RNA sequence: GGGAACGACUCGAGUAGAGUCGAAAAUGCAGGUGCCAUUGGCUGGCUUGCUGUCAUCUGUAGGGGAAACUUAGGUUGGAACAUCCAAGACAGCUUACUCAAAUGGCUGAAAGUUGGUGCUGGGGUCAGCUAGAAGGUCAGAUGGUACCGCUGACCAGCGUACUAGUAGUUUCGACUACUAGUACGCAAAAGAAACAACAACAACAAC
Reactivity to DMS in 0.01 (KOAc 150mM, MgCl2 10mM, bicine 150mM(pH8.5), 24C), signal-to-noise 1, nucleotides 027 to 156: u000g020c030a040g080g030u020g020c010c000a070u010u000g040g000c000u000g010g030c050u000u010g020c020u020g010u010c020a090u010c040u010g020u000a050g010g050g000g000a090a080a080c050u020u000a060g010g010u000u010g050g020a120a090c110a080u000c030c030a060a060g010a170c020a120g040c040u010u000a150c050u000c130a080a090a150u010g020g010c010u010g000a040a040a070g030u020u010g030g030u000g010c040u010g010g000g030g030u010c020a040g030c040u010a100g000a060a070g030g030u000c030a080g050a090u000g010g010u000a070c030c030g010c030u000g010a080c000c000a140
Reactivity to 2A3 in 0.01 (KOAc 150mM, MgCl2 10mM, bicine 150mM(pH8.5), 24C), signal-to-noise 2, nucleotides 027 to 156: u130g010c070a040g000g030u000g020c010c000a030u020u060g020g010c070u040g050g020c000u020u030g000c000u020g030u050c010a120u000c070u070g130u110a070g030g000g000g060a040a040a050c040u090u050a130g080g030u120u060g020g000a090a020c000a080u040c020c010a020a000g040a080c010a020g010c020u020u050a060c070u080c160a020a060a120u170g020g000c000u010g090a120a100a030g060u050u060g020g040u090g040c020u070g010g000g010g030u020c000a010g000c010u030a040g020a100a030g080g000u000c020a000g050a230u020g000g000u010a020c000c000g000c000u000g040a010c020c030a010
Chemical mapping of a 207-nucleotide RNA with DMS and 2A3. Source: RMDB library OK3TST, as collected in RNAgym. 2A3 adducts were read by reverse transcription with SuperScript II with manganese.